[RMDB]
RNA sequence: GGGAACGACUCGAGUAGAGUCGAAAAGAUAUGGACGUCAGAGGGAGCUGGGUAUCGGAAACGAUACCUAGCAUCGAUCUCUGGACGUCCUAAGUCAAAGCGUUUAUGACUUCGGUCAUAAACGCAACCCUGCAGUAACGUUCGCGUUACUGCAGGGAAAAGAAACAACAACAACAAC
Reactivity to 2A3 in 0.01 (KOAc 150mM, MgCl2 10mM, bicine 150mM(pH8.5), 24C), signal-to-noise 2, nucleotides 027 to 126: g020a020u050a020u070g010g000a000c000g020u000c000a010g020a010g010g110g100a170g040c020u010g000g090g000u000a000u010c010g010g010a020a010a010c010g000a010u010a000c000c000u020a000g040c010a000u080c020g050a090u000c010u000c000u050g030g080a000c010g010u000c000c000u000a020a010g020u000c040a160a120a060g000c010g010u000u020u000a010u030g010a010c000u060u170c300g010g010u010c000a000u010a010a000a000c000g020c010a000a000
Reactivity to DMS in 0.01 (KOAc 150mM, MgCl2 10mM, bicine 150mM(pH8.5), 24C), signal-to-noise 1, nucleotides 027 to 126: g000a020u000a130u000g000g000a070c000g000u000c000a050g000a020g020g010g020a170g050c000u010g020g000g000u000a000u000c000g020g000a010a000a060c000g000a040u000a000c000c010u010a000g030c000a130u010c300g020a120u020c010u000c000u000g060g000a010c010g020u000c000c000u010a010a080g010u000c000a140a120a210g000c000g000u000u000u000a000u000g000a030c000u000u020c190g010g010u000c000a000u000a000a000a010c000g000c000a010a050